[RMDB]
RNA sequence: GGGAACGACUCGAGUAGAGUCGAAAAUACGUGUUUGGCGAUUGUGUACAGGCCGAUUGGUGUCCCGUCUCAGGUGGUCUAUGUUCCACCCGCCUACAUCGACAUGCCCUCCUGGCCACCUGUCCAGCGCCCAUUCCAUGUUCGCAUGGAAUGGGCGAAAAGAAACAACAACAACAAC
Reactivity to DMS in 0.01 (KOAc 150mM, MgCl2 10mM, bicine 150mM(pH8.5), 24C), signal-to-noise 1, nucleotides 027 to 126: u090a030c160g040u000g030u010u000u010g010g000c020g000a100u000u020g040u010g030u020a070c000a020g000g020c030c050g020a200u000u090g000g070u020g000u000c000c040c000g000u000c200u000c070a050g000g040u000g000g010u010c080u060a020u010g000u000u010c030c010a040c060c020c040g000c020c000u000a100c020a010u000c120g000a100c140a030u030g000c010c070c000u000c000c010u000g000g000c030c040a010c000c000u000g030u000c030c170a160g010
Reactivity to 2A3 in 0.01 (KOAc 150mM, MgCl2 10mM, bicine 150mM(pH8.5), 24C), signal-to-noise 3, nucleotides 027 to 126: u180a010c030g010u040g020u120u060u100g060g000c090g040a100u010u270g070u070g050u180a030c040a080g060g000c010c000g000a080u040u150g030g020u060g060u040c000c000c000g080u000c030u020c080a020g070g000u010g000g030u050c080u150a170u180g060u140u040c020c010a010c000c000c010g030c000c010u010a010c000a140u080c050g080a030c030a060u090g000c000c010c000u050c000c010u000g040g040c000c000a070c010c010u020g030u040c020c010a020g000